[RMDB]
RNA sequence: GGGAACGACUCGAGUAGAGUCGAAAAAAGUUAAAUAUUUUGGGUGGAAUACAUCAUAGAUCAUGUUUGUACUUCAUGUUGCCUCACAUCAGGAUACACUUAACAUCUGAUGACUGCCAUAGUGAUGCUAAGUUUAAACACUGAACUAGGAUAAUGACACUACCUAUCGUUUCGACGAUAGGUAGUGAAAAGAAACAACAACAACAAC
Reactivity to 2A3 in 0.01 (KOAc 150mM, MgCl2 10mM, bicine 150mM(pH8.5), 24C), signal-to-noise 5, nucleotides 027 to 156: a000a000g150u180u050a130a120a090u130a140u110u100u100u110g080g000g010u020g040g030a070a020u070a090c030a020u080c010a030u080a040g100a090u060c050a040u070g070u030u070u060g060u040a090c040u000u030c020a040u070g040u030u080g070c000c010u020c000a050c000a040u050c000a000g030g020a040u050a100c070a020c060u060u080a040a020c020a050u020c020u060g050a060u050g090a140c070u070g020c040c000a060u080a110g120u070g070a010u020g010c020u010a000a000g000u010u010u050a100a140a010c090a040c100u020g020a060a050c010u040a030g050g060a060u160a100a070u290g030a020
Reactivity to DMS in 0.01 (KOAc 150mM, MgCl2 10mM, bicine 150mM(pH8.5), 24C), signal-to-noise 3, nucleotides 027 to 156: a110a100g000u010u000a050a060a140u000a070u000u000u000u010g010g030g040u010g020g010a070a040u000a050c030a020u000c030a060u000a130g000a130u010c110a080u000g020u010u000u010g020u000a060c060u000u000c020a080u000g000u010u000g000c020c030u000c070a150c070a110u010c020a030g000g020a240u000a080c160a100c040u000u010a030a040c040a050u000c020u020g020a080u000g000a170c090u000g000c130c030a090u000a110g020u000g000a070u000g010c020u000a010a040g010u000u000u000a060a050a110c100a120c040u000g010a040a080c070u000a130g020g010a140u010a070a090u010g030a280